This 177-nucleotide RNA was probed chemically with 2A3.
The reactions ran in a buffer of 150 mM KOAc, 10 mM MgCl2 and 150 mM bicine (pH 8.5), at 24 C.
For 2A3, 490 sequencing reads were counted.
It was measured as part of the RMDB library OK1LIB.
[RMDB]
RNA sequence: GGGAACGACUCGAGUAGAGUCGAAAACAGGAGAAUUCGAUGACCUCAGCGACCAUCCCCGGUCUGGAUACCGCGCCGACGAAUCACCAGGGGUUGCUGUCCUGGGUCGAAGAGGUCGCCGAGCUCAUGGUGAGGCCUCGUUCGCGAGGCCUCACCAAAAAGAAACAACAACAACAAC
Reactivity to 2A3 in 0.01 (KOAc 150mM, MgCl2 10mM, bicine 150mM(pH8.5), 24C), signal-to-noise 1, nucleotides 027 to 126: c100a060g070g100a070g070a080a130u150u070c010g040a010u070g040a020c000c000u050c060a030g020c040g010a000c000c000a050u120c000c000c000c000g050g030u010c020u070g000g160a040u040a100c020c000g000c000g080c090c070g060a260c000g000a070a000u140c050a050c020c000a070g010g000g070g050u030u060g110c020u050g150u120c020c000u040g050g000g000u070c020g000a000a000g000a000g050g000u010c000g000c020c000g000a000g040c030u020c000a060